An RNA of 177 nucleotides, treated with 2A3 and DMS and read out base by base. For DMS the reverse transcriptase was MarathonRT. Source: RMDB library OK2TST, as collected in RNAgym. For 2A3 the reverse transcriptase was SuperScript II with manganese. The reactions ran in a buffer of 150 mM KOAc, 10 mM MgCl2 and 150 mM bicine (pH 8.5), at 24 C.
[RMDB]
RNA sequence: GGGAACGACUCGAGUAGAGUCGAAAAAAAGCUGGUAAUAAUCAUCUAGAUAUUGGAACCGUGAUUUAUCAUGCAGCAGAAACAGACCUGAUAAUUGCUAACGCUAUUACCCAAGAAUUCUAUGGGCCAGGAUAUAUGUGUUCGCACAUAUAUCCUGAAAAGAAACAACAACAACAAC
Reactivity to 2A3 in 0.01 (KOAc 150mM, MgCl2 10mM, bicine 150mM(pH8.5), 24C), signal-to-noise 3, nucleotides 027 to 126: a000a000a020g040c030u040g050g020u040a060a030u060a050a030u040c020a000u030c040u100a070g060a180u120a170u210u150g070g010a070a050c060c030g040u010g010a030u040u150u110a110u100c040a020u110g020c000a030g020c010a000g090a010a040a020c010a000g040a050c010c030u050g050a030u040a100a040u030u040g000c010u050a100a000c060g000c020u050a040u100u150a070c010c000c010a000a040g100a080a190u210u080c070u140a150u110g030g010g020c030
Reactivity to DMS in 0.01 (KOAc 150mM, MgCl2 10mM, bicine 150mM(pH8.5), 24C), signal-to-noise 3, nucleotides 027 to 126: a110a080a050g010c050u020g020g020u010a060a040u000a090a040u010c010a060u000c040u000a100g010a140u000a110u020u000g000g010a110a050c260c050g010u010g010a030u000u010u000a020u000c030a030u000g010c060a050g020c080a050g000a110a070a090c100a030g010a060c070c100u000g000a050u010a030a040u010u010g000c020u000a050a060c200g030c030u010a050u000u000a110c020c000c030a110a100g010a080a090u000u000c060u000a080u010g000g000g030c250